This 207-nucleotide RNA was probed chemically with 2A3. The reactions ran in a buffer of 150 mM KOAc, 10 mM MgCl2 and 150 mM bicine (pH 8.5), at 24 C. The 2A3 profile rests on 978 reads. 2A3 is a SHAPE reagent: it acylates the 2'-hydroxyl of flexible nucleotides of all four kinds.

RNA sequence: GGGAACGACUCGAGUAGAGUCGAAAAUGCUAAAGGAAAUCGAGAUUGGGAGUGAGUAGAUUGACUUUCGGGCAGUGUAUUCAGCUUGCCAUCAUACACAGGCACGAUCAGGCGACUGGACGUUGCACCAUACAUGUUACCUGAUUGUGACGAGUUAGUAAAAUUUUAGCUUCGGCUAAAAUUUUACAAAAGAAACAACAACAACAAC
Reactivity to 2A3 in 0.01 (KOAc 150mM, MgCl2 10mM, bicine 150mM(pH8.5), 24C), signal-to-noise 2, nucleotides 027 to 156: u150g000c010u080a100a010a010g040g010a090a020a000u100c020g010a000g000a130u100u230g020g010g010a020g010u070g010a010g000u060a030g030a080u030u060g030a110c010u000u080u130c100g060g020g000c010a000g010u040g030u050a160u040u110c050a030g030c020u050u110g040c040c000a080u120c020a030u110a040c090a020c050a110g000g100c020a000c020g000a010u020c000a000g000g000c020g040a020c030u040g060g000a040c060g110u130u160g000c050a040c020c000a030u180a160c020a020u300g000u000u000a010c000c020u020g000a020u000u000g000u000g030a030c030g020a010g040u050u040a010